This 207-nucleotide RNA was probed chemically with 2A3 and DMS. For 2A3 the reverse transcriptase was SuperScript II with manganese. For DMS, 1,734 sequencing reads were counted. It was measured as part of the RMDB library OK3TST.

RNA sequence: GGGAACGACUCGAGUAGAGUCGAAAAAGAUUUGUCUAGGGAUUUUGCUGGUAAGGCUAAGGGAACCUAGAGAAGAGAGGAGCCUGAACAGAGGCCUAUGACUGGGAACAAGUUGUGUGUGACUAACGCCUUUCCAUGUGCCAUAAAAUACAAGGCAAGUCAUCGUAUUAUUCGUAAUACGAUGACUAAAAGAAACAACAACAACAAC
Reactivity to 2A3 in 0.01 (KOAc 150mM, MgCl2 10mM, bicine 150mM(pH8.5), 24C), signal-to-noise 2, nucleotides 027 to 156: a020g050a030u090u070u130g030u020c020u020a040g020g070g030a130u050u060u090u190g010c030u030g000g080u110a060a050g040g000c040u050a010a070g030g040g030a040a060c000c010u020a020g040a010g050a120a030g050a000g000a010g020g020a020g030c010c000u050g030a040a030c090a110g070a040g030g040c000c000u030a040u120g080a040c020u030g010g020g010a070a040c090a100a110g030u030u010g050u030g050u050g000u000g040a010c020u020a050a010c040g000c010c000u010u050u110c050c000a040u150g060u070g010c000c000a060u240a060a110a000a000u110a070c080a100a000g040g000c030a070
Reactivity to DMS in 0.01 (KOAc 150mM, MgCl2 10mM, bicine 150mM(pH8.5), 24C), signal-to-noise 1, nucleotides 027 to 156: a130g010a180u020u000u020g030u000c070u000a120g020g000g010a100u000u000u000u000g000c010u040g010g020u000a110a070g020g060c010u020a110a060g020g090g000a070a080c010c020u020a050g000a110g050a080a070g050a160g000a150g000g020a110g010c030c020u010g000a070a080c110a180g000a070g050g020c020c000u000a040u000g000a040c070u010g000g020g060a060a140c050a050a120g030u010u010g020u010g000u000g020u090g000a130c080u000a050a080c110g000c020c000u010u000u000c010c040a080u010g020u000g000c000c020a150u020a100a010a070a110u020a080c100a040a020g040g130c010a080